[RMDB]
Structure probing data (2A3) for a 177-nucleotide construct.
Values are in units of 0.01, from 0 to 300, in steps of 10.
For 2A3, 434 sequencing reads were counted.
2A3 adducts were read by reverse transcription with SuperScript II with manganese.
Reactivities are given for positions 27 through 126.
The RNA was probed in 150 mM KOAc, 10 mM MgCl2 and 150 mM bicine (pH 8.5) at 24 C.
RNA sequence: GGGAACGACUCGAGUAGAGUCGAAAACUGACCUUCUUGAGGUCUGGCUUCAAGCACUGUUUUGGUGUUGUGGCUGAUACUCUUGGGCAGUGUUUUGCACCUCUGAGAGUGGAGUAACUCCUCCUGUGGCUUUUUUGAGUUUCGACUCAAAAAAGCCAAAAGAAACAACAACAACAAC
Reactivity to 2A3 in 0.01 (KOAc 150mM, MgCl2 10mM, bicine 150mM(pH8.5), 24C), signal-to-noise 1, nucleotides 027 to 126: c070u120g100a300c000c000u110u180c000u010u080g030a000g060g000u050c040u000g100g020c010u020u020c050a000a030g000c000a010c010u090g130u300u110u230u300g000g000u000g020u020u040g040u000g000g040c000u000g000a020u030a240c000u000c000u000u020g000g000g000c010a000g030u000g140u090u020u000u050g000c060a010c070c060u040c040u040g040a100g060a010g070u060g000g030a070g000u070a050a040c020u020c000c000u010c000c060u040g010u040